[RMDB]
RNA sequence: GGGAACGACUCGAGUAGAGUCGAAAAAUGAACGUGGUGGGCGUAAGUUAGUAGAAGAUCUAAUGGUACGCGGAGGGUUUUCGACUGUACUCGAAACCACCACCACCACCAAGUCGUUCCCACCGAAUAAGGUUGAAUAAUUCGUUAUUCAACCUUAAAAAGAAACAACAACAACAAC
Reactivity to DMS in 0.01 (KOAc 150mM, MgCl2 10mM, bicine 150mM(pH8.5), 24C), signal-to-noise 6, nucleotides 027 to 126: a080u010g000a070a070c080g020u000g020g020u000g010g000g010c010g020u000a120a280g020u000u010a010g010u000a090g010a140a130g000a100u000c000u010a010a020u000g000g020u000a010c030g010c010g020g020a170g010g000g010u000u000u000u000c010g010a010c030u000g000u000a040c090u000c010g010a040a050a080c070c030a080c030c030a210c070c020a030c010c040a030c050c090a080a050g010u000c000g010u000u000c000c000c000a060c130c140g010a070a100
Reactivity to 2A3 in 0.01 (KOAc 150mM, MgCl2 10mM, bicine 150mM(pH8.5), 24C), signal-to-noise 7, nucleotides 027 to 126: a000u180g010a050a010c040g010u010g010g000u010g000g040g000c010g000u020a040a030g010u010u010a010g010u030a050g080a300a030g020a080u040c010u020a000a020u040g230g030u070a010c010g010c060g040g060a090g010g010g010u040u000u040u060c000g000a010c030u140g080u200a030c020u000c010g000a010a000a010c000c010a000c010c010a010c010c000a000c000c000a000c010c010a030a010g010u010c000g000u010u000c020c000c010a000c010c020g050a040a070
Structure probing data (DMS and 2A3) for a 177-nucleotide construct. The reactions ran in a buffer of 150 mM KOAc, 10 mM MgCl2 and 150 mM bicine (pH 8.5), at 24 C.